Record summary:
Chemical mapping of a 177-nucleotide RNA with 2A3 and DMS.

RNA sequence: GGGAACGACUCGAGUAGAGUCGAAAAGUUUGUGCUUCCAAUUGCGAUGCUGACAGUGCGUUGGAUUCCGUACUCCGUGGCACAAUCCGAACCUCAGUGUCCAGUGCACCAUAAGGAGCUUCAGCUGAUAAUCGGUGCCUUUCGAGGCACCGAUUAUAAAAGAAACAACAACAACAAC
Reactivity to 2A3 in 0.01 (KOAc 150mM, MgCl2 10mM, bicine 150mM(pH8.5), 24C), signal-to-noise 2, nucleotides 027 to 126: g020u030u010u020g000u070g000c010u090u130c050c000a040a030u110u180g000c030g060a060u080g020c050u030g040a040c000a150g020u020g020c000g000u050u060g030g030a040u060u060c070c000g000u010a030c020u040c060c070g050u030g030g000c030a070c030a050a040u050c010c040g100a030a050c020c010u140c070a030g040u030g020u060c060c100a040g000u000g060c000a000c020c020a020u120a150a010g090g020a020g020c000u140u080c080a070g000c050u090g070
Reactivity to DMS in 0.01 (KOAc 150mM, MgCl2 10mM, bicine 150mM(pH8.5), 24C), signal-to-noise 1, nucleotides 027 to 126: g000u000u010u000g000u070g000c010u000u000c000c020a050a120u020u020g020c010g010a080u000g000c000u000g000a080c300a130g000u020g020c040g030u000u000g000g000a020u000u000c060c000g040u000a090c000u000c000c150g000u010g000g000c140a030c080a020a010u020c090c010g040a150a040c030c030u020c070a110g000u000g000u000c020c000a060g030u010g000c030a050c000c080a230u140a100a100g060g020a000g020c030u000u000c030a080g000c000u060g000
The reactions ran in a buffer of 150 mM KOAc, 10 mM MgCl2 and 150 mM bicine (pH 8.5), at 24 C. For 2A3 the reverse transcriptase was SuperScript II with manganese.